RNA sequence: GGGAACGACUCGAGUAGAGUCGAAAAGCAACCACCUUCGGGUGGUUGCAAAUGACGAUGCACGAUGACCAAGACGAAGAUGCUGAAGACGACGACGAACAAAAAGACCCACGUUCGCGUGGGUCAACCUUACUCACUCGUUCGCGAGUGAGUAAGGAAAAGAAACAACAACAACAAC
Reactivity to DMS in 0.01 (KOAc 150mM, MgCl2 10mM, bicine 150mM(pH8.5), 24C), signal-to-noise 1, nucleotides 027 to 126: g010c020a010a020c010c020a020c010c010u000u010c160g050g050g060u000g000g000u030u000g000c000a030a040a060u000g000a050c050g000a070u000g020c030a050c040g020a090u000g010a110c070c030a030a060g010a070c070g000a070a130g010a120u010g000c010u010g020a090a050g000a060c060g040a050c010g000a040c110g020a080a060c100a060a090a020a090a120g000a020c000c000c000a000c020g030u000u020c210g000c000g030u010g000g000g000u010c010a000a010
Reactivity to 2A3 in 0.01 (KOAc 150mM, MgCl2 10mM, bicine 150mM(pH8.5), 24C), signal-to-noise 1, nucleotides 027 to 126: g000c010a010a000c010c000a040c030c010u010u090c190g100g010g010u000g000g010u000u020g000c010a000a000a000u050g010a010c030g020a040u060g010c030a000c070g040a070u050g030a010c010c000a050a030g010a000c040g050a050a020g010a060u070g000c060u020g040a060a020g060a010c040g000a000c020g010a000c020g020a120a050c040a050a110a060a000a000g000a010c010c000c010a010c020g000u020u060c280g010c000g080u010g000g000g000u020c000a000a000
Structure probing data (DMS and 2A3) for a 177-nucleotide construct. Values cover nucleotides 27 to 126. Conditions: 150 mM KOAc, 10 mM MgCl2 and 150 mM bicine (pH 8.5), 24 C. For 2A3 the reverse transcriptase was SuperScript II with manganese. The data come from the RNA Mapping Database (RMDB), library M2PK50. The 2A3 profile rests on 1,438 reads. For DMS the reverse transcriptase was MarathonRT. For DMS, 937 sequencing reads were counted.